[RMDB]
This 177-nucleotide RNA was probed chemically with 2A3 and DMS. It was measured as part of the RMDB library OK2TST. The DMS profile rests on 704 reads. The reactions ran in a buffer of 150 mM KOAc, 10 mM MgCl2 and 150 mM bicine (pH 8.5), at 24 C. DMS adducts were read by reverse transcription with MarathonRT.
RNA sequence: GGGAACGACUCGAGUAGAGUCGAAAACAACCACGGCCUCCGGCGUGAAGCCGUACUCACGGAACAAAGUCUGGUAAUCUGCGGAUUCGCCGUAGUGCUCGAUGGACACAAUCUUGCCGGUGUCUCAGUAGGUUUUAUGCUUCGGCAUAAAACCUACAAAAGAAACAACAACAACAAC
Reactivity to 2A3 in 0.01 (KOAc 150mM, MgCl2 10mM, bicine 150mM(pH8.5), 24C), signal-to-noise 1, nucleotides 027 to 126: c020a030a010c000c020a020c040g020g000c000c000u030c060c000g030g000c010g020u040g030a080a000g050c000c000g050u040a110c080u110c060a220c040g060g010a150a030c090a140a130a080g120u000c000u030g000g040u090a050a120u020c070u090g000c010g070g000a080u030u110c000g060c000c020g000u010a020g020u020g060c090u050c160g120a160u060g020g000a030c030a000c000a120a130u030c030u010u100g060c000c070g000g000u020g010u000c010u010c030a010
Reactivity to DMS in 0.01 (KOAc 150mM, MgCl2 10mM, bicine 150mM(pH8.5), 24C), signal-to-noise 1, nucleotides 027 to 126: c160a060a110c030c020a130c030g020g070c020c010u010c030c000g010g000c070g000u030g010a110a100g000c020c020g030u000a090c180u020c100a080c030g000g000a030a120c080a090a140a200g000u020c010u010g000g000u010a060a150u000c100u000g000c000g000g010a240u000u000c110g000c030c000g020u000a030g010u000g000c010u020c060g030a080u000g010g010a060c070a080c120a130a080u030c050u000u040g000c090c000g020g010u000g000u000c030u010c120a280